The record gives the reactivity of an RNA of 177 nucleotides to DMS and 2A3. For 2A3 the reverse transcriptase was SuperScript II with manganese.
RNA sequence: GGGAACGACUCGAGUAGAGUCGAAAACCGAGAAUGAAGGAACCGGAAACCAAGUCGAAUAUUCUGUCAGUUUCUGGAGGUCCUCGCUUGCAGACGGGCUCAAUAACCACUGGACAGAGUUACCAGACACGUACGAUAAUUUCGAUUAUCGUACGUGAAAAGAAACAACAACAACAAC
Reactivity to DMS in 0.01 (KOAc 150mM, MgCl2 10mM, bicine 150mM(pH8.5), 24C), signal-to-noise 6, nucleotides 027 to 126: c010c000g000a140g010a090a080u010g000a120a090g010g000a130a110c010c000g000g000a040a050a050c040c050a100a100g010u010c080g020a090a130u000a080u000u000c010u000g010u000c050a140g000u000u000u000c040u000g010g010a120g010g010u000c020c010u000c050g000c090u000u000g000c070a070g010a080c110g010g000g010c040u000c070a080a070u010a080a100c080c060a090c060u010g000g010a060c050a060g000a060g000u010u000a100c050c030a100g010a300
Reactivity to 2A3 in 0.01 (KOAc 150mM, MgCl2 10mM, bicine 150mM(pH8.5), 24C), signal-to-noise 6, nucleotides 027 to 126: c010c000g010a060g030a030a150u220g030a120a050g030g010a020a070c020c000g010g020a020a000a010c020c030a090a030g050u040c030g060a120a030u130a120u290u060c050u030g040u030c020a020g000u000u050u010c010u020g030g020a030g030g080u020c010c010u000c010g030c040u070u130g020c050a030g020a110c070g020g020g000c000u020c060a020a050u100a090a070c050c040a050c060u040g020g020a020c020a040g110a040g070u040u040a070c020c010a000g020a050
Notes: The RNA was probed in 150 mM KOAc, 10 mM MgCl2 and 150 mM bicine (pH 8.5) at 24 C. For DMS the reverse transcriptase was MarathonRT.